[RMDB]
RNA sequence: GGGAACGACUCGAGUAGAGUCGAAAAGCUACCGGGGAGCACUGCCGCCAUAUCCACUGCUGCCUGGGACUGGCGCGCGGCGCAGCCCCUGGUGAUGAUUUCGGGCGCACCGUACAACGCUUGCGAAGUCACCCAAGCAAUUCGUUGCUUGGGUGACAAAAGAAACAACAACAACAAC
Reactivity to DMS in 0.01 (KOAc 150mM, MgCl2 10mM, bicine 150mM(pH8.5), 24C), signal-to-noise 1, nucleotides 027 to 126: g000c050u010a000c000c010g000g060g010g010a130g010c000a030c000u000g020c000c000g000c000c010a010u040a300u000c010c000a060c120u090g000c050u000g010c120c140u020g070g010g040a000c300u000g000g000c010g010c150g000c000g000g060c030g120c000a170g030c030c030c010c000u040g070g050u000g000a030u000g000a020u000u000u000c000g020g000g020c010g000c090a040c170c070g090u000a070c070a120a090c100g000c060u000u040g140c070g000a110a010
Reactivity to 2A3 in 0.01 (KOAc 150mM, MgCl2 10mM, bicine 150mM(pH8.5), 24C), signal-to-noise 2, nucleotides 027 to 126: g060c050u070a040c000c000g000g000g000g000a050g000c020a010c020u000g030c020c010g000c010c010a010u040a080u070c000c050a120c090u150g060c050u060g040c030c070u030g030g040g000a010c040u010g000g010c000g000c010g000c010g030g000c040g040c040a080g140c050c040c020c020u000g000g000u000g010a100u060g060a090u000u080u090c040g000g000g000c030g010c050a060c080c050g030u090a070c070a130a020c040g020c090u080u090g050c050g060a070a000